[RMDB]
This 177-nucleotide RNA was probed chemically with 2A3 and DMS.
The reactions ran in a buffer of 150 mM KOAc, 10 mM MgCl2 and 150 mM bicine (pH 8.5), at 24 C.
For DMS the reverse transcriptase was MarathonRT.
RNA sequence: GGGAACGACUCGAGUAGAGUCGAAAAGCUUGAUGGACUGGGGUAUACUGGGAGAGACUUACGUGAUCUUCUAGAGAGUAAAUCUAUCACUGGCCAGAUAAUUCAUGCAGAUAUGACUGAUUUGUUCCGACGGGUAUACUUUCGAGUAUACCCGUCGAAAAGAAACAACAACAACAAC
Reactivity to 2A3 in 0.01 (KOAc 150mM, MgCl2 10mM, bicine 150mM(pH8.5), 24C), signal-to-noise 1, nucleotides 027 to 126: g050c000u030u040g070a000u080g040g000a010c020u010g000g040g080g040u050a000u080a110c030u040g010g000g000a000g030a020g000a030c000u060u100a040c160g080u180g120a130u010c000u120u000c040u020a050g020a000g030a000g090u090a000a250a000u010c010u040a000u020c000a000c090u060g150g000c080c000a000g020a100u100a050a080u060u010c080a040u100g080c030a020g000a220u140a100u140g080a100c020u000g040a210u050u070u200g060u180u060c030
Reactivity to DMS in 0.01 (KOAc 150mM, MgCl2 10mM, bicine 150mM(pH8.5), 24C), signal-to-noise 2, nucleotides 027 to 126: g000c020u000u000g000a080u000g000g040a100c030u000g000g000g000g020u020a110u010a210c060u010g010g030g000a050g000a060g010a090c040u010u010a080c190g000u020g000a080u010c010u000u020c090u000a070g010a060g000a170g000u000a060a090a070u000c020u000a050u000c020a060c070u000g000g030c050c020a020g000a040u000a110a090u000u000c040a030u010g000c010a060g000a100u000a120u010g000a080c130u000g000a140u000u000u010g020u000u000c080